An RNA of 177 nucleotides, treated with 2A3 and DMS and read out base by base. For 2A3, 1,250 sequencing reads were counted.
RNA sequence: GGGAACGACUCGAGUAGAGUCGAAAAAGAUGCACUAACAUUAUCUCCUUUAGCCAAAGAAAAACCAAUCGUUUUAGUUGCUGAUGGAAGUAAUAAAGGUAUUUUAAAAGGAGCUAAAAGUAUAACAAUAAUCCGUACGUUUCGACGUACGGAUUAUAAAAGAAACAACAACAACAAC
Reactivity to 2A3 in 0.01 (KOAc 150mM, MgCl2 10mM, bicine 150mM(pH8.5), 24C), signal-to-noise 3, nucleotides 027 to 126: a000g150a030u060g010c020a020c230u190a160a020c100a080u030u090a100u050c040u000c000c010u000u010u050a000g000c000c020a100a080a000g230a020a070a030a010a000c010c030a090a110u090c070g030u010u090u080u060a210g010u130u060g030c020u020g020a030u180g060g000a090a020g030u040a020a130u060a140a140a010g040g000u050a100u010u150u010u090a060a180a040a050g040g000a020g060c020u070a090a080a050a010g200u160a120u080a240a010c030a110
Reactivity to DMS in 0.01 (KOAc 150mM, MgCl2 10mM, bicine 150mM(pH8.5), 24C), signal-to-noise 3, nucleotides 027 to 126: a020g000a030u020g000c060a040c100u000a040a150c250a060u000u020a010u010c040u000c010c000u000u000u000a040g000c030c100a020a070a180g000a040a020a020a050a060c020c240a110a070u050c160g010u000u020u010u030a150g000u020u020g030c020u000g000a080u030g020g000a050a060g000u000a020a040u000a060a150a100g030g000u000a050u040u000u010u020a000a040a060a070g000g000a030g010c070u020a020a040a040a030g010u020a090u040a110a090c210a060

The DMS profile rests on 3,754 reads.